Source: RMDB library TTRDEL, as collected in RNAgym.
Chemical mapping of a 177-nucleotide RNA with DMS and 2A3.
As a SHAPE reagent, 2A3 marks flexible, mostly unpaired nucleotides at the ribose 2'-OH.
For 2A3, 4,878 sequencing reads were counted.
RNA sequence: GGGAACGACUCGAGUAGAGUCGAAAAGAUAUGGAACCUUCCUUUUGACGCUUUAAGGGUCGGAAACGACCCGGAGAGCGAUAAGGAGGUUCCUAAGUCAAAACGGCCCUCGUUCGCGAGGGCCGAACCUAGAUAGAUCGUUCGCGAUCUAUCUAGGAAAAGAAACAACAACAACAAC
Reactivity to DMS in 0.01 (KOAc 150mM, MgCl2 10mM, bicine 150mM(pH8.5), 24C), signal-to-noise 3, nucleotides 027 to 126: g020a040u000a300u000g000g000a030a010c000c000u000u000c010c000u000u000u000u000g030a220c080g000c000u000u000u000a300a200g000g010g000u000c000g010g010a090a050a190c000g010a020c000c000c000g000g000a200g000a010g020c000g010a110u000a000a010g000g000a050g000g000u000u000c000c000u000a000a060g000u000c050a060a050a130a240c010g010g020c000c000c000u000c000g020u000u010c180g030c030g010a010g000g020g030c010c000g000a000a010
Reactivity to 2A3 in 0.01 (KOAc 150mM, MgCl2 10mM, bicine 150mM(pH8.5), 24C), signal-to-noise 2, nucleotides 027 to 126: g000a000u050a020u140g030g000a000a010c010c010u270u300c100c020u110u110u080u170g300a140c060g020c000u070u060u010a040a030g010g000g000u000c000g020g010a050a090a030c010g000a000c020c030c000g000g000a010g000a000g000c010g000a000u000a010a000g000g000a000g010g000u000u000c000c000u000a000a000g010u010c020a000a000a110a180c010g000g000c000c000c000u010c010g020u100u060c300g010c020g090a000g020g070g000c000c000g010a000a000